Structure probing data (2A3 and DMS) for a 207-nucleotide construct. The 2A3 profile rests on 941 reads.
RNA sequence: GGGAACGACUCGAGUAGAGUCGAAAAGUAUCCCUAGAUGAUAAAACACCGCACAUGGCUCGUAAGAGCGGUUAAAUUAGCAAGUAAUGCAAAUUACGCGACGUAACGCAUGGCCUAGGCUCGUUAGAAAAGGGAGAAUCCUUCGGGAUUCUCCCAAUCAUUCUUUUACCUUCGGGUAAAAGAAUGAAAAAGAAACAACAACAACAAC
Reactivity to 2A3 in 0.01 (KOAc 150mM, MgCl2 10mM, bicine 150mM(pH8.5), 24C), signal-to-noise 2, nucleotides 027 to 156: g030u020a140u040c010c000c000u040a060g050a160u080g050a030u220a050a180a000a050c090a010c000c030g030c000a050c030a170u090g080g000c020u040c050g070u080a050a060g010a030g050c020g000g000u030u060a030a070a040u070u130a000g000c050a120a030g090u090a150a040u050g050c040a010a050a130u090u030a020c030g030c020g050a020c050g010u040a060a010c040g000c030a040u040g020g030c010c010u000a030g060g010c010u010c080g050u060u040a020g090a040a120a080a050g000g010g010a000g000a000a010u000c010c010u020u080c160g000g000g000a000u000u000c000u000c000c000c000a000a000
Reactivity to DMS in 0.01 (KOAc 150mM, MgCl2 10mM, bicine 150mM(pH8.5), 24C), signal-to-noise 2, nucleotides 027 to 156: g020u000a110u000c000c000c000u000a090g000a120u000g000a150u000a060a110a070a150c060a070c000c010g050c050a230c050a190u020g030g010c000u000c040g030u000a080a120g000a060g030c010g050g000u010u010a060a110a190u010u000a070g010c060a080a100g010u000a040a060u000g010c160a080a060a040u010u000a060c010g020c030g020a140c080g000u000a050a050c030g000c070a070u000g030g000c040c060u000a080g040g000c030u000c030g010u010u000a090g010a050a040a120a190g010g030g020a030g010a070a010u000c000c020u000u010c300g060g010g000a010u010u000c000u000c000c000c000a000a010